The data come from the RNA Mapping Database (RMDB), library OK1LIB. The record gives the reactivity of an RNA of 177 nucleotides to 2A3 and DMS. The reactions ran in a buffer of 150 mM KOAc, 10 mM MgCl2 and 150 mM bicine (pH 8.5), at 24 C.

RNA sequence: GGGAACGACUCGAGUAGAGUCGAAAAGCUGAGGAGUUUAUCUGUUCGCUUAGUCUGUGAAGUUUUCUUGUAACUCCGGCAGGUUCACGUCAGACUCGCGAUCUUGCCCACUGCACGGCCAGACAGGCGUGGAAAAUGGGUUCGCCCAUUUUCCACGAAAAGAAACAACAACAACAAC
Reactivity to 2A3 in 0.01 (KOAc 150mM, MgCl2 10mM, bicine 150mM(pH8.5), 24C), signal-to-noise 3, nucleotides 027 to 126: g040c070u090g030a020g050g000a020g020u080u090u130a210u080c060u040g170u050u070c020g060c020u030u030a030g030u020c070u090g120u040g130a130a050g030u070u040u140u000c070u070u100g020u120a060a040c010u010c080c000g110g000c010a020g040g000u010u130c050a000c080g030u000c080a040g020a070c010u010c020g010c030g040a050u000c030u050u080g030c000c000c050a070c040u050g020c040a100c130g030g000c020c000a010g050a060c010a060g030g030
Reactivity to DMS in 0.01 (KOAc 150mM, MgCl2 10mM, bicine 150mM(pH8.5), 24C), signal-to-noise 3, nucleotides 027 to 126: g020c010u020g050a080g000g010a030g000u010u020u000a070u030c040u010g000u000u000c050g050c020u000u010a070g000u010c040u000g020u000g000a140a100g020u000u000u000u010c020u000u020g030u010a070a060c080u020c020c030g000g000c030a080g010g010u000u020c050a060c050g030u060c050a050g000a100c020u010c300g030c070g000a110u020c070u010u000g020c000c000c040a110c060u000g000c080a070c040g000g000c030c010a060g010a100c130a070g020g000

The DMS profile rests on 3,917 reads.